An RNA of 177 nucleotides, treated with DMS and 2A3 and read out base by base. The data come from the RNA Mapping Database (RMDB), library OK2TST. For DMS the reverse transcriptase was MarathonRT. 2A3 adducts were read by reverse transcription with SuperScript II with manganese.

RNA sequence: GGGAACGACUCGAGUAGAGUCGAAAAACGGAUAUAACAUUAGUGCAUCAUCAUUUGAAGUAACAUUUAAUCCACCAAUGAACUUUGCAGCGAAUCGUAAAGCUGAGAUGGAUGCUAAAUUAAUUCACCGUACGUAAGAAUUCGUUCUUACGUACGGAAAAGAAACAACAACAACAAC
Reactivity to DMS in 0.01 (KOAc 150mM, MgCl2 10mM, bicine 150mM(pH8.5), 24C), signal-to-noise 5, nucleotides 027 to 126: a100c120g000g000a060u020a090u000a070a100c160a080u010u000a060g010u000g020c020a020u000c010a030u010c030a120u010u010u000g010a020a010g000u010a060a080c040a020u000u000u000a060a100u000c090c050a070c160c160a050a040u000g010a150a060c010u000u000u000g020c020a030g020c030g010a070a110u010c260g010u000a050a070a150g010c000u000g010a100g000a020u010g030g010a010u000g000c040u000a020a070a060u000u010a030a120u010u000c080a120
Reactivity to 2A3 in 0.01 (KOAc 150mM, MgCl2 10mM, bicine 150mM(pH8.5), 24C), signal-to-noise 6, nucleotides 027 to 126: a000c060g020g040a050u080a020u070a210a070c100a120u080u170a070g090u030g090c000a010u000c000a010u010c010a040u040u030u200g020a020a000g010u030a130a070c010a010u020u040u100a070a070u020c040c020a010c050c010a050a010u010g000a010a020c010u020u010u090g000c000a000g000c000g060a060a090u160c100g080u150a070a080a000g000c010u010g010a020g020a070u030g150g030a000u010g010c020u040a070a050a060u110u120a020a070u080u060c040a030